[RMDB]
RNA sequence: GGGAACGACUCGAGUAGAGUCGAAAACGGCUGAUGAAUAAUUGUCCGCAAACCAGCCUCUCUGGGGCACUGAGGGGCGGGAAGGUUAGAAGGAGCCAGGGCUAGAGUCCUGGAAGGUGGCAGUCAGGUCGCAGGGCCACAGCAGUCACUCUGCGAAAUGAUUAUAGGGAUUCGUCCCUAUAAUCAUAAAAGAAACAACAACAACAAC
Reactivity to DMS in 0.01 (KOAc 150mM, MgCl2 10mM, bicine 150mM(pH8.5), 24C), signal-to-noise 1, nucleotides 027 to 156: c030g020g030c000u010g030a090u020g010a240a120u000a170a090u000u000g050u000c010c040g000c040a100a120a130c010c030a100g000c000c010u000c030u000c060u010g030g000g040g070c100a030c070u000g000a050g000g000g030g000c030g000g000g010a030a020g000g050u010u000a080g010a130a120g010g000a150g040c000c020a060g010g000g000c000u020a120g010a150g020u000c000c010u000g010g000a000a010g050g020u010g000g000c040a110g000u010c100a140g000g010u010c010g020c050a110g000g020g000c020c030a100c050a070g000c080a050g040u010c080a150c030u030c000u000g030c030g020a060a270
Reactivity to 2A3 in 0.01 (KOAc 150mM, MgCl2 10mM, bicine 150mM(pH8.5), 24C), signal-to-noise 2, nucleotides 027 to 156: c030g020g010c020u030g030a090u030g050a120a170u160a200a120u210u120g040u060c010c060g000c040a040a040a030c020c010a030g020c020c000u010c000u010c020u020g060g010g050g080c120a050c060u050g040a010g000g000g000g020c070g060g020g020a050a040g030g000u060u070a030g030a060a020g020g020a010g040c030c020a020g000g000g000c010u080a060g030a020g160u010c020c010u020g000g060a030a020g090g000u030g010g000c010a000g030u040c020a020g040g050u000c020g000c020a000g000g030g000c020c030a030c020a060g060c000a000g020u030c010a020c080u070c010u010g010c000g020a200a040
Structure probing data (DMS and 2A3) for a 207-nucleotide construct. It was measured as part of the RMDB library OK3TST. DMS (dimethyl sulfate) methylates the pairing face of unpaired adenines and cytosines. The 2A3 profile rests on 1,464 reads. DMS adducts were read by reverse transcription with MarathonRT.